[RMDB]
RNA sequence: GGGAACGACUCGAGUAGAGUCGAAAAGAUAUGGAGCGAACUUCGCGAAACUUGUCCAUCGGAAACGAUGGCAAGGAGAAGACUCCUAAGUCAAACCUUGGUGAGUUCUUCGGAACUCACCAAGGAACAAAGAAAGCAUGUUCGCAUGCUUUCUUUGAAAAGAAACAACAACAACAAC
Reactivity to 2A3 in 0.01 (KOAc 150mM, MgCl2 10mM, bicine 150mM(pH8.5), 24C), signal-to-noise 3, nucleotides 027 to 126: g010a010u070a030u180g010g000a020g050c140g120a080a070c000u020u010c020g000c100g140a100a060a070c000u020u010g130u200c010c000a000u000c000g000g040a090a050a070c020g000a010u000g000g000c000a000a000g040g020a090g010a000a000g100a160c000u010c000c010u010a120a010g060u040c040a100a020a180c000c010u000u000g000g000u000g000a020g020u010u000c000u040u070c290g090g000a000a010c000u010c010a000c000c000a000a010g010g000a000a000
Reactivity to DMS in 0.01 (KOAc 150mM, MgCl2 10mM, bicine 150mM(pH8.5), 24C), signal-to-noise 4, nucleotides 027 to 126: g010a060u010a300u000g000g000a000g000c060g020a100a120c010u000u000c000g020c080g010a080a040a130c000u000u000g000u020c000c000a010u000c000g010g010a130a100a130c010g010a010u000g000g000c000a000a000g000g020a210g000a010a020g000a150c010u000c010c000u010a060a130g010u010c040a080a120a140c000c000u000u000g000g000u000g000a020g000u000u000c000u000u000c190g000g010a010a010c000u000c000a010c000c000a000a000g000g010a030a060